RNA sequence: GGGAACGACUCGAGUAGAGUCGAAAAGAACUGGCUACGAUAAAAGAUAAAUCAGAUGAUGAAUGGUGGCGUGCAUUGCUGCAAAGUCGCAAUGAUCAUUUACGCCAAACGGCAUUGCGCAACGCACCUCAGAUAAAUAGUUCGCUAUUUAUCUGAGAAAAGAAACAACAACAACAAC
Reactivity to 2A3 in 0.01 (KOAc 150mM, MgCl2 10mM, bicine 150mM(pH8.5), 24C), signal-to-noise 9, nucleotides 027 to 126: g020a040a020c040u030g030g010c020u050a020c070g040a060u090a140a180a030a040g130a060u120a080a140a030u050c030a030g060a180u120g010a010u050g040a120a080u100g060g020u020g020g030c020g010u020g000c030a050u050u070g010c050u040g010c020a080a040a030g050u070c010g000c040a030a070u050g020a030u060c020a050u030u140u110a080c100g010c020c000a030a020a000c010g000g000c000a010u000u030g000c010g000c020a020a030c040g010c020a030c020
Reactivity to DMS in 0.01 (KOAc 150mM, MgCl2 10mM, bicine 150mM(pH8.5), 24C), signal-to-noise 9, nucleotides 027 to 126: g010a100a100c060u000g000g010c020u000a060c070g010a080u010a050a070a110a110g010a120u010a060a080a060u010c030a120g010a090u000g010a070u000g010a070a060u000g000g010u000g010g010c070g030u000g010c020a040u000u000g010c030u010g030c040a030a060a060g020u000c030g010c040a040a060u000g000a070u010c100a080u010u000u000a070c180g010c100c050a030a110a080c050g000g000c010a050u000u000g010c010g010c030a040a060c090g000c060a050c110